[RMDB]
RNA sequence: GGGAACGACUCGAGUAGAGUCGAAAAGCUUCAAUUUUACUACCAUUUUCUAAUGGCACCUUUAUCGCUGAAUUUUCAGCAUUAAACCUAUUUACAACGGUUUUAAGUUCAUUGUAUUUUUGGGUACGAUUCGAAAAGGAUUCGUCCUUUUCGAAUCAAAAGAAACAACAACAACAAC
Reactivity to DMS in 0.01 (KOAc 150mM, MgCl2 10mM, bicine 150mM(pH8.5), 24C), signal-to-noise 1, nucleotides 027 to 126: g000c120u000u030c110a050a040u000u010u000u000a070c070u000a080c010c010a050u000u000u000u020c150u020a050a030u000g010g000c090a030c070c040u000u000u000a080u020c240g010c000u000g040a000a210u020u010u000u000c030a010g000c000a170u000u000a080a090a090c000c010u000a070u000u000u000a030c090a010a030c100g000g000u020u010u000u000a050a170g010u000u010c060a090u000u000g000u010a010u000u000u000u000u000g000g000g010u010a080c180
Reactivity to 2A3 in 0.01 (KOAc 150mM, MgCl2 10mM, bicine 150mM(pH8.5), 24C), signal-to-noise 3, nucleotides 027 to 126: g040c020u170u110c040a100a130u090u100u110u190a100c090u060a050c000c000a020u040u050u080u130c080u250a030a000u020g020g000c050a070c010c000u070u160u150a190u180c070g000c000u000g050a100a120u170u250u100u120c010a000g000c000a010u070u120a030a030a010c000c000u000a020u020u080u040a060c060a070a020c040g090g010u040u100u080u120a060a040g030u050u070c030a040u050u050g030u000a070u050u070u020u060u030g020g000g000u030a050c050